[RMDB]
RNA sequence: GGGAACGACUCGAGUAGAGUCGAAAAGAUAUGGAGCCAUGGCUAGCGAUGGCUCGGAAACGAGCUCAGAAAUCGCUUGGACCCAUGGACCCUCCUAAGUCAAAACACUUUGGUUCGCCAAAGUGAAGCACACUGUGUAGUUCGCUACACAGUGUGCAAAAGAAACAACAACAACAAC
Reactivity to DMS in 0.01 (KOAc 150mM, MgCl2 10mM, bicine 150mM(pH8.5), 24C), signal-to-noise 2, nucleotides 027 to 126: g000a010u000a020u010g000g000a040g020c020c000a010u000g000g000c000u000a000g030c000g000a000u000g010g010c000u000c020g000g010a020a000a000c000g030a000g010c020u000c300a100g000a050a160a170u000c030g020c000u000u000g000g020a000c300c010c000a000u000g020g000a150c230c120c010u000c000c000u000a000a100g010u000c000a090a100a080a110c010a000c000u010u000u000g010g020u000u010c270g000c000c000a020a000a020g000u000g010a060a140
Reactivity to 2A3 in 0.01 (KOAc 150mM, MgCl2 10mM, bicine 150mM(pH8.5), 24C), signal-to-noise 2, nucleotides 027 to 126: g000a000u010a000u030g000g010a010g020c000c000a000u010g000g000c000u000a010g000c000g020a000u020g030g040c020u020c000g000g010a010a020a000c000g000a000g000c090u110c300a110g300a160a300a110u060c000g000c000u070u200g020g020a000c000c000c010a000u020g000g010a100c070c010c000u000c000c000u000a000a010g000u000c030a000a040a120a040c010a000c000u020u000u030g050g030u040u090c300g030c100c000a000a000a000g020u010g020a050a030
The data come from the RNA Mapping Database (RMDB), library TTRDEL. This 177-nucleotide RNA was probed chemically with DMS and 2A3. Reactivities are given for positions 27 through 126. The reactions ran in a buffer of 150 mM KOAc, 10 mM MgCl2 and 150 mM bicine (pH 8.5), at 24 C. The 2A3 profile rests on 3,199 reads.